[RMDB]
RNA sequence: GGGAACGACUCGAGUAGAGUCGAAAAUCAAACGAUUUCGAUCGUUUGAAACGGACCACUCCUGCGGGAGUUAAGGCCAUACGGACUGCCGGGUCCACUGCCAGUCAUUCGGUUUCGACCGAAUGAAUACGUAACGCCUAUUCGUAGGCGUUACGUAAAAAGAAACAACAACAACAAC
Reactivity to DMS in 0.01 (KOAc 150mM, MgCl2 10mM, bicine 150mM(pH8.5), 24C), signal-to-noise 2, nucleotides 027 to 126: u000c010a020a000a010c000g000a020u000u010u010c190g010a020u010c000g020u000u000u000g020a020a050a120c210g030g010a030c010c030a080c000u000c000c000u000g030c100g010g000g020a010g000u000u000a050a050g020g000c030c100a150u010a110c160g010g020a030c080u000g000c020c020g000g000g000u000c010c010a150c180u010g010c070c030a140g020u010c020a000u000u000c000g000g000u000u010u010c190g010a040c000c000g020a010a010u000g010a020a090
Reactivity to 2A3 in 0.01 (KOAc 150mM, MgCl2 10mM, bicine 150mM(pH8.5), 24C), signal-to-noise 1, nucleotides 027 to 126: u020c000a000a010a030c010g000a020u000u060u150c190g080a020u020c000g000u000u020u020g030a040a000a010c070g000g010a020c000c000a020c000u000c000c000u010g010c250g120g000g000a000g020u040u160a030a070g000g000c020c020a080u140a200c120g080g010a080c040u020g000c030c000g000g060g000u000c010c000a000c020u070g090c020c010a040g130u040c000a000u010u010c010g030g000u040u040u150c240g060a020c000c020g020a010a000u000g000a010a020